[RMDB]
RNA sequence: GGGAACGACUCGAGUAGAGUCGAAAAUAGGAUAGGUCGCAGUGGCAAGGGGACCCCGACUGUUUACCAAAAACACAGACCGCUGCUAGUCCGUAAGGAUGUGUAUAGCGGCCGAAACCUGCCCAGUCUUACUAGUCUUGUUCGCAAGACUAGUAAGAAAAGAAACAACAACAACAAC
Reactivity to DMS in 0.01 (KOAc 150mM, MgCl2 10mM, bicine 150mM(pH8.5), 24C), signal-to-noise 2, nucleotides 027 to 126: u010a060g020g010a070u000a180g010g020u010c040g000c020a160g030u000g020g020c050a060a110g040g010g020g020a150c100c000c010c000g040a080c100u000g000u000u000u010a120c100c170a040a070a050a050a030c070a060c140a070g040a120c040c000g000c050u000g000c010u000a280g020u000c000c020g000u020a040a120g030g000a020u000g000u000g010u000a120u000a080g020c000g000g010c010c000g000a040a060a130c020c020u000g000c000c030c040a160g000u010
Reactivity to 2A3 in 0.01 (KOAc 150mM, MgCl2 10mM, bicine 150mM(pH8.5), 24C), signal-to-noise 3, nucleotides 027 to 126: u190a010g000g010a010u010a060g010g010u020c020g000c020a020g030u030g050g000c050a120a130g040g000g020g100a100c030c040c010c000g030a060c030u030g020u050u080u130a100c020c020a060a060a040a140a000c040a010c020a020g090a130c000c030g050c070u000g000c000u000a030g030u020c010c030g010u030a040a070g000g010a010u020g040u010g010u060a030u080a240g010c010g010g000c000c000g010a060a010a010c000c010u010g000c000c000c000a060g020u020